The record gives the reactivity of an RNA of 177 nucleotides to 2A3 and DMS. Values cover nucleotides 27 to 126. DMS adducts were read by reverse transcription with MarathonRT.

RNA sequence: GGGAACGACUCGAGUAGAGUCGAAAAGCAUGCAGCGGAACGAAGGGGAAGAGGAGGCAGGACAGCUUCUUCAAGAUGGUCGGCCUCAAGGCAUUGGUAGUCCCACCGAGCCUCCACACCCGCGUGAACAUCUAUGCCUAUUCGUAGGCAUAGAUGUAAAAGAAACAACAACAACAAC
Reactivity to 2A3 in 0.01 (KOAc 150mM, MgCl2 10mM, bicine 150mM(pH8.5), 24C), signal-to-noise 5, nucleotides 027 to 126: g080c060a040u180g000c030a020g020c050g060g030a070a050c030g060a160a100g020g020g010g010a070a060g050a060g200g000a000g000g000c010a010g000g100a020c010a020g030c020u020u010c010u140u060c150a050a040g020a070u080g020g040u020c020g000g000c000c010u030c030a030a020g030g000c100a160u040u110g020g000u050a040g040u030c010c000c000a000c000c000g000a010g010c000c010u040c020c010a070c020a020c010c000c000g030c000g040u050g050a060
Reactivity to DMS in 0.01 (KOAc 150mM, MgCl2 10mM, bicine 150mM(pH8.5), 24C), signal-to-noise 8, nucleotides 027 to 126: g020c100a080u000g010c060a080g020c040g010g010a110a070c100g020a100a120g000g010g010g030a120a110g000a140g010g000a020g000g010c000a050g000g010a040c040a130g000c010u000u000c160u010u010c150a040a040g000a030u010g000g010u000c030g010g000c010c010u010c030a110a060g010g010c050a100u000u000g000g010u000a140g000u000c010c010c000a210c020c020g000a070g000c010c010u010c060c070a090c130a140c040c010c010g010c090g020u010g000a100
For 2A3 the reverse transcriptase was SuperScript II with manganese. The 2A3 profile rests on 8,746 reads. For DMS, 10,558 sequencing reads were counted.